[RMDB]
RNA sequence: GGGAACGACUCGAGUAGAGUCGAAAAUGGGGGUGCACCGGUUUCGACAGGGCGGGCAAUGGUGAGCAGGCAACCCGAGAGGCGACGGACGUAAUCCGCGCAAAUCCACAAACGCCAACGAUGAGCGCGAAAGAACCAAAUUCGUUUGGUUCUUUCGAAAAGAAACAACAACAACAAC
Reactivity to DMS in 0.01 (KOAc 150mM, MgCl2 10mM, bicine 150mM(pH8.5), 24C), signal-to-noise 5, nucleotides 027 to 126: u010g010g000g010g010g000u010g010c060a060c040c030g010g010u000u010u020c080g010a110c120a110g000g000g010c090g000g000g010c070a070a090u020g000g010u010g000a080g000c060a070g000g000c060a090a110c030c020c040g000a100g010a090g000g010c040g000a090c050g010g000a010c130g000u030a060a120u000c030c010g010c050g010c030a030a060a080u000c040c080a070c120a070a090a110c040g000c020c030a050a120c160g000a100u010g000a070g010c040g000
Reactivity to 2A3 in 0.01 (KOAc 150mM, MgCl2 10mM, bicine 150mM(pH8.5), 24C), signal-to-noise 5, nucleotides 027 to 126: u080g020g000g000g020g020u050g010c010a020c020c010g020g030u010u060u070c030g040a030c030a050g020g040g030c050g020g010g000c030a050a050u050g020g010u050g030a040g030c030a020g040g030c010a070a040c020c010c020g040a040g000a010g070g000c020g020a100c010g040g000a000c030g020u040a050a070u020c000c010g000c000g010c000a050a040a020u040c050c010a070c020a050a110a010c040g000c010c000a050a030c050g090a120u180g050a010g020c040g010